Background:
Structure probing data (DMS and 2A3) for a 177-nucleotide construct. The RNA was probed in 150 mM KOAc, 10 mM MgCl2 and 150 mM bicine (pH 8.5) at 24 C. The DMS profile rests on 5,367 reads. 2A3 adducts were read by reverse transcription with SuperScript II with manganese.
RNA sequence: GGGAACGACUCGAGUAGAGUCGAAAAGUUAUGGAAAACGUCUUAGCAACCACUACAACAACAAUGCUGGACGGUGAUGGUUCGACUUACUCGAAACCAUCACGUAGUGGUAGUCGUUCCCAUUCAACUUAAUGCACCUAUUCGUAGGUGCAUUAAGAAAAGAAACAACAACAACAAC
Reactivity to DMS in 0.01 (KOAc 150mM, MgCl2 10mM, bicine 150mM(pH8.5), 24C), signal-to-noise 5, nucleotides 027 to 126: g020u000u000a090u000g010g010a080a070a090a140c030g000u000c020u010u010a030g030c030a070a080c110c070a050c100u010a080c080a090a060c140a050a080c180a090a090u000g000c010u000g010g000a040c030g010g010u000g010a040u000g010g020u000u000c010g010a010c110u000u010a030c130u000c010g000a050a110a060c050c040a030u000c040a020c100g020u000a020g020u000g000g010u000a150g010u010c000g020u000u000c000c000c010a050u010u000c110a080a180
Reactivity to 2A3 in 0.01 (KOAc 150mM, MgCl2 10mM, bicine 150mM(pH8.5), 24C), signal-to-noise 7, nucleotides 027 to 126: g030u070u070a100u300g140g080a070a080a020a040c010g010u000c040u190u260a060g000c030a040a080c020c050a040c090u180a050c040a190a010c000a050a010c020a080a210u100g020c020u030g040g010a020c030g010g050u020g020a030u050g020g070u000u020c010g000a030c040u060u110a020c010u040c010g020a080a030a030c010c010a010u030c010a010c060g030u100a040g010u020g000g010u010a000g010u000c000g000u000u010c000c000c010a000u040u120c010a010a030